[RMDB]
RNA sequence: GGGAACGACUCGAGUAGAGUCGAAAAUGAAAGCUGUGUGAGCGAGGCGGGCGGAGGAUGAGGCCGUGCCCGGGCUCAGGCUGCAGCCGCCCGGGGACACGCCGUGCACCCUCGGGCUCCGGAAAAACAUAGGAAAUAGAUUCGUCUAUUUCCUAUGAAAAGAAACAACAACAACAAC
Reactivity to 2A3 in 0.01 (KOAc 150mM, MgCl2 10mM, bicine 150mM(pH8.5), 24C), signal-to-noise 5, nucleotides 027 to 126: u160g040a070a030a030g020c040u030g030u040g040u100g190a030g030c060g010a040g030g080c070g000g010g010c040g020g020a020g020g010a040u060g030a050g040g040c090c030g010u030g030c010c010c000g010g010g000c050u060c080a030g030g000c020u170g050c070a040g010c010c020g010c020c010c030g000g000g000g010a040c010a000c020g010c010c000g000u050g010c010a030c000c000c000u010c000g010g120g000c040u040c030c020g040g040a050a100a010a010a010
Reactivity to DMS in 0.01 (KOAc 150mM, MgCl2 10mM, bicine 150mM(pH8.5), 24C), signal-to-noise 9, nucleotides 027 to 126: u010g010a090a090a110g010c020u000g010u010g010u000g010a070g010c040g010a110g010g010c070g010g000g010c030g010g000a040g010g010a050u000g010a150g000g010c050c060g010u000g000c010c000c000g000g010g010c030u010c160a110g020g000c010u010g010c220a140g010c010c030g000c000c000c000g010g000g000g000a060c020a030c090g010c030c030g020u000g000c040a040c040c010c010u000c010g010g020g010c010u000c010c020g010g010a040a050a050a090a150
About this RNA: Chemical mapping of a 177-nucleotide RNA with 2A3 and DMS. 2A3 adducts were read by reverse transcription with SuperScript II with manganese. The RNA was probed in 150 mM KOAc, 10 mM MgCl2 and 150 mM bicine (pH 8.5) at 24 C.